[RMDB]
RNA sequence: GGGAACGACUCGAGUAGAGUCGAAAACGCCGCGAUUGCAGCACUGCCGGCCAUCGCGCAGACCGCUCCGCCACAGGGGCAAGGCGCCAGCGCGCAGAAGGCCAAUGACGAGAAGGCCAAGACCGAGGUCUCCAAUUACCUUCGGGUAAUUGGAGACAAAAGAAACAACAACAACAAC
Reactivity to DMS in 0.01 (KOAc 150mM, MgCl2 10mM, bicine 150mM(pH8.5), 24C), signal-to-noise 1, nucleotides 027 to 126: c090g000c300c000g060c000g040a080u030u000g040c050a170g000c000a050c030u000g060c190c050g030g000c070c060a010u060c050g000c060g010c090a030g000a040c130c130g060c010u000c000c000g040c140c020a180c200a080g000g020g020g020c020a050a070g000g010c050g000c020c030a100g010c060g000c000g050c060a000g000a020a080g000g000c030c000a040a150u000g000a020c070g000a060g000a260a050g000g000c000c010a070a140g300a140c090c000g100a150g000
Reactivity to 2A3 in 0.01 (KOAc 150mM, MgCl2 10mM, bicine 150mM(pH8.5), 24C), signal-to-noise 2, nucleotides 027 to 126: c050g000c000c030g000c020g100a100u050u090g030c020a030g010c040a080c190u080g000c040c000g040g000c020c010a050u010c010g010c010g030c010a000g080a020c000c070g000c000u040c000c000g060c100c120a130c030a090g010g020g010g040c040a020a120g030g000c030g020c030c010a050g030c030g010c000g030c000a010g020a220a040g040g000c010c000a030a120u060g020a020c070g000a040g050a090a090g010g000c000c010a090a000g000a010c000c060g090a020g000
Chemical mapping of a 177-nucleotide RNA with DMS and 2A3. Values cover nucleotides 27 to 126. Conditions: 150 mM KOAc, 10 mM MgCl2 and 150 mM bicine (pH 8.5), 24 C. For 2A3, 1,354 sequencing reads were counted.